[RMDB]
RNA sequence: GGGAACGACUCGAGUAGAGUCGAAAAAGCACAGAAAAGUUUGGGAAACACUAUCUUCACCCAUUUGUUAACUACUGAUAAAGAGUUCAACUAGUAGAUGAACUUUGAAGGAGGUUAAAAUUUUCCCCUCUUCUUUGUGAAUGUAAUUAAAGUGAUAGUGCUACCUAGUAUUCGUACUAGGUAGCACAAAAGAAACAACAACAACAAC
Reactivity to 2A3 in 0.01 (KOAc 150mM, MgCl2 10mM, bicine 150mM(pH8.5), 24C), signal-to-noise 2, nucleotides 027 to 156: a020g000c000a000c000a000g060a000a070a000a100g040u110u140u220g010g000g020a000a010a000c080a000c030u120a150u120c010u020u030c050a110c000c040c030a040u140u130u070g030u030u000a070a080c010u100a000c030u100g010a060u090a300a160a040g100a040g060u010u020c000a000a010c030u060a020g050u000a020g030a070u020g060a050a050c010u020u050u080g010a000a000g040g010a030g160g020u060u060a080a020a220a270u080u120u100u060c020c030c040c010u060c040u030u060c000u000u010u140g010u010g090a060a070u120g070u190a000a080u130u090a130a110a020g060u050g020a100u130a100

Annotation
Structure probing data (2A3) for a 207-nucleotide construct. Values are in units of 0.01, from 0 to 300, in steps of 10. Values cover nucleotides 27 to 156. Source: RMDB library OK3TST, as collected in RNAgym. The reactions ran in a buffer of 150 mM KOAc, 10 mM MgCl2 and 150 mM bicine (pH 8.5), at 24 C.